Conditions: 150 mM KOAc, 10 mM MgCl2 and 150 mM bicine (pH 8.5), 24 C. Chemical mapping of a 207-nucleotide RNA with 2A3 and DMS. For 2A3, 7,964 sequencing reads were counted. DMS adducts were read by reverse transcription with MarathonRT. The DMS profile rests on 7,498 reads.
RNA sequence: GGGAACGACUCGAGUAGAGUCGAAAAUUGGGUACGAACGUACUCGAAUGGGCGAUUGUUUGUGUCAAACGUAAUUUGUCGCAUGACUAGUACCGGAUCGCCACGUUUAAUGCCUAAAUAUUCAGAAAUACGUUCCGUAACAGCCGCCGCGGUCACCGUAUACACUGCUGUUCGCAGCAGUGUAUACAAAAGAAACAACAACAACAAC
Reactivity to 2A3 in 0.01 (KOAc 150mM, MgCl2 10mM, bicine 150mM(pH8.5), 24C), signal-to-noise 9, nucleotides 027 to 156: u080u050g030g010g000u010a020c040g030a160a030c080g020u030a020c030u010c100g020a050a070u110g030g010g020c040g030a060u080u060g100u130u090u080g070u030g020u040c030a080a050a040c100g100u120a100a300u040u040u070g050u030c030g010c100a040u170g030a040c040u060a040g060u070a120c070c060g040g020a020u030c010g010c030c010a020c010g000u000u040u060a100a050u120g010c010c010u070a120a110a070u190a040u080u160c080a040g090a080a090a010u100a040c040g010u040u000c050c010g010u070a050a050c020a050g030c010c030g040c030c030g040c040g030g000u050c030a020c100c030
Reactivity to DMS in 0.01 (KOAc 150mM, MgCl2 10mM, bicine 150mM(pH8.5), 24C), signal-to-noise 3, nucleotides 027 to 156: u000u010g000g000g020u010a030c060g010a060a080c070g000u000a050c030u000c030g030a060a060u000g020g020g010c030g030a120u000u000g030u020u000u000g030u000g000u000c050a030a140a090c050g010u010a040a300u000u000u010g010u000c030g010c100a120u010g010a030c010u010a110g020u000a080c100c040g030g020a140u000c030g030c050c020a040c060g000u000u010u000a060a120u000g010c040c040u010a050a090a120u000a100u010u010c060a110g020a110a080a070u010a040c030g000u010u000c030c030g020u000a040a060c030a090g000c040c030g010c070c050g040c020g000g000u000c020a070c090c100